[RMDB]
RNA sequence: GGGAACGACUCGAGUAGAGUCGAAAAUGAUUUAUCUCAAUCAGAGCUUGCUAACUUUCAACAAGAUUCAGUCAAUGCGUUGCUUGUAAUAGCUGGUAAUGCUUACACAGGAGCUGAUGAGAAUGACAUGUCAUCCGGAUUUCGAUCCGGAUGACAUAAAAGAAACAACAACAACAAC
Reactivity to DMS in 0.01 (KOAc 150mM, MgCl2 10mM, bicine 150mM(pH8.5), 24C), signal-to-noise 2, nucleotides 027 to 126: u010g000a140u000u020u000a070u040c020u010c010a090a090u000c010a010g010a130g010c000u000u010g020c050u020a060a080c100u000u000u020c170a090a110c100a060a010g000a160u010u000c150a060g000u020c190a050a070u000g050c060g050u020u000g000c020u000u010g000u010a060a070u000a090g000c040u000g010g010u000a020a060u000g020c020u000u000a130c280a110c050a060g020g000a060g050c010u010g000a040u000g000a030g000a050a110u010g010a150c170
Reactivity to 2A3 in 0.01 (KOAc 150mM, MgCl2 10mM, bicine 150mM(pH8.5), 24C), signal-to-noise 2, nucleotides 027 to 126: u170g070a070u100u110u150a160u010c000u000c060a080a090u030c020a030g010a010g030c020u060u030g000c010u020a090a050c030u040u130u200c090a060a060c020a080a020g060a180u010u090c010a030g120u080c020a050a100u130g000c010g040u040u070g050c020u030u030g030u010a090a180u050a300g070c010u060g070g000u080a080a020u060g000c000u040u030a080c060a010c030a030g080g000a060g000c010u030g010a020u020g000a010g000a030a090u080g050a000c040
The record gives the reactivity of an RNA of 177 nucleotides to DMS and 2A3. For DMS, 1,424 sequencing reads were counted. For DMS the reverse transcriptase was MarathonRT. Reactivities are given for positions 27 through 126. The 2A3 profile rests on 1,103 reads.